[RMDB]
RNA sequence: GGGAACGACUCGAGUAGAGUCGAAAAACUCGCCUUUUACUCUUCUUUCGUUUUGAAGGAAAUAUGAGUGAAAUCAGAAGGACAAUCGUCGUUUUGAUGAUAUACCUUCGCCUCUUUAGAGUAAGGAGUAGUUUAUAGACUUCGGUCUAUAAACUACAAAAGAAACAACAACAACAAC
Reactivity to 2A3 in 0.01 (KOAc 150mM, MgCl2 10mM, bicine 150mM(pH8.5), 24C), signal-to-noise 4, nucleotides 027 to 126: a000c020u020c020g040c000c010u040u140u040u060a010c000u020c010u050u000c000u030u020u010c030g110u180u060u220u300g010a000a010g020g080a030a100a020u190a070u110g010a000g010u120g100a140a050a070u140c050a090g000a000a000g010g010a020c140a070a010u000c000g010u000c040g030u070u080u230u300g000a010u000g000a010u000a010u020a020c020c000u000u000c000g000c000c010u020c010u020u120u140a020g000a000g020u000a020a010g000g020a060
Reactivity to DMS in 0.01 (KOAc 150mM, MgCl2 10mM, bicine 150mM(pH8.5), 24C), signal-to-noise 2, nucleotides 027 to 126: a090c040u010c030g010c040c020u000u000u010u020a000c000u010c000u000u000c010u000u000u000c010g020u010u010u010u020g020a010a040g000g000a020a110a090u010a060u000g010a000g010u010g010a060a100a120u010c180a140g010a020a020g020g020a050c170a020a020u010c000g020u010c000g020u000u010u010u010g010a000u000g010a000u000a050u010a050c000c000u000u000c000g000c110c020u000c000u000u010u000a090g010a030g030u000a030a020g010g000a090